[RMDB]
RNA sequence: GGGAACGACUCGAGUAGAGUCGAAAAUGUAGGCACUUUAUUUCUCCACUUUCAAGAGCUUGGGCUUGGCCCAAAUCUUAGACUGUCCAAUUCUGCCUCUAUUACCAAUUUAAAUCUAUGGCUUGAAGUUGAACGGGCAGUUCGCUGCCCGUUCAACAAAAGAAACAACAACAACAAC
Reactivity to 2A3 in 0.01 (KOAc 150mM, MgCl2 10mM, bicine 150mM(pH8.5), 24C), signal-to-noise 1, nucleotides 027 to 126: u160g040u040a200g010g110c000a010c000u190u130u120a090u000u180u000c030u050c000c000a000c000u030u010u030c130a000a040g060a030g000c100u000u000g000g000g000c060u120u160g140g200c110c000c000a000a000a000u000c010u000u000a000g090a100c000u000g090u100c060c060a150a200u000u000c000u030g000c010c000u100c000u200a140u130u150a040c040c100a100a110u200u200u080a180a000a000u180c030u040a110u100g010g010c010u010u130g040a180a020
The record gives the reactivity of an RNA of 177 nucleotides to 2A3. Values cover nucleotides 27 to 126. 2A3 is a SHAPE reagent: it acylates the 2'-hydroxyl of flexible nucleotides of all four kinds. For 2A3 the reverse transcriptase was SuperScript II with manganese. For 2A3, 260 sequencing reads were counted.